[RMDB]
Structure probing data (2A3 and DMS) for a 177-nucleotide construct. Reactivities are rounded to 0.1 and cut off at 0 and 3. For DMS, 2,261 sequencing reads were counted. 2A3 adducts were read by reverse transcription with SuperScript II with manganese. The data come from the RNA Mapping Database (RMDB), library OK1LIB.
RNA sequence: GGGAACGACUCGAGUAGAGUCGAAAACAAUAUAUUUCCAUGGGGAUACUUGUUCAGACCGCGUCAGGGUAUCCUAUGUUCAAAACCUUAAAGAUCCAAUAUCUCAGUGAUGGCCUGAAUCGGAAAACGCGAUCUAUAAAUUCGUUUAUAGAUCGCGAAAAGAAACAACAACAACAAC
Reactivity to 2A3 in 0.01 (KOAc 150mM, MgCl2 10mM, bicine 150mM(pH8.5), 24C), signal-to-noise 4, nucleotides 027 to 126: c050a090a030u150a010u060a080u180u100u040c010c010a050u130g020g010g020g020a000u010a040c000u100u100g050u140u170c050a050g020a170c040c060g040c020g040u040c040a030g000g060g000u000a030u000c000c000u040a060u080g050u010u040c080a090a100a040a060c010c010u110u210a140a100a020g080a060u010c010c010a090a000u070a140u190c110u030c060a010g010u040g150a080u050g050g050c000c010u060g030a030a040u100c060g050g030a030a070a040a000
Reactivity to DMS in 0.01 (KOAc 150mM, MgCl2 10mM, bicine 150mM(pH8.5), 24C), signal-to-noise 2, nucleotides 027 to 126: c110a100a080u050a070u030a050u000u000u000c010c010a130u000g010g000g010g000a060u000a000c050u000u000g000u020u000c060a070g000a090c000c050g020c050g000u000c080a170g010g000g000u010a050u000c010c000u000a050u010g010u000u000c200a090a050a130a140c090c020u000u000a080a120a100g000a040u020c070c060a050a070u030a040u020c000u000c100a060g050u070g000a080u000g000g040c000c030u000g000a050a030u010c060g000g000a070a020a100a070